The data come from the RNA Mapping Database (RMDB), library OK2TST. An RNA of 177 nucleotides, treated with 2A3 and DMS and read out base by base. For 2A3, 845 sequencing reads were counted.
RNA sequence: GGGAACGACUCGAGUAGAGUCGAAAAAGAUUCCGAGCCAGAGUGCUAUUACUGCGGACAACGUGACCUUGGAGCUGGACGGUGUGCUGUACACCCGGGUGUUCGACCCUUACAAGGCCAGGUAAGAGUGACUUACGUACUUCGGUACGUAAGUCACAAAAGAAACAACAACAACAAC
Reactivity to 2A3 in 0.01 (KOAc 150mM, MgCl2 10mM, bicine 150mM(pH8.5), 24C), signal-to-noise 1, nucleotides 027 to 126: a000g060a050u030u010c030c000g000a040g000c010c020a110g110a070g100u270g050c000u000a040u090u070a040c040u110g040c000g010g030a020c000a040a010c160g070u010g130a060c000c000u010u080g120g000a060g070c060u050g000g050a060c070g010g000u010g020u020g020c170u100g080u130a010c010a040c000c040c050g100g000g010u060g000u100u060c030g070a050c010c010c000u040u100a030c000a010a010g020g000c050c010a040g020g020u030a050a000g120a040
Reactivity to DMS in 0.01 (KOAc 150mM, MgCl2 10mM, bicine 150mM(pH8.5), 24C), signal-to-noise 1, nucleotides 027 to 126: a130g010a240u000u030c040c010g030a130g000c030c030a150g010a120g010u010g010c070u000a110u030u000a040c090u000g020c050g000g010a130c150a110a050c100g020u000g000a040c010c000u000u000g010g000a130g020c030u000g010g000a140c170g020g000u000g020u000g020c120u000g000u010a130c050a020c010c010c080g030g000g000u010g010u000u010c120g000a110c000c030c010u000u000a160c050a070a030g010g000c030c030a030g000g010u020a060a080g000a230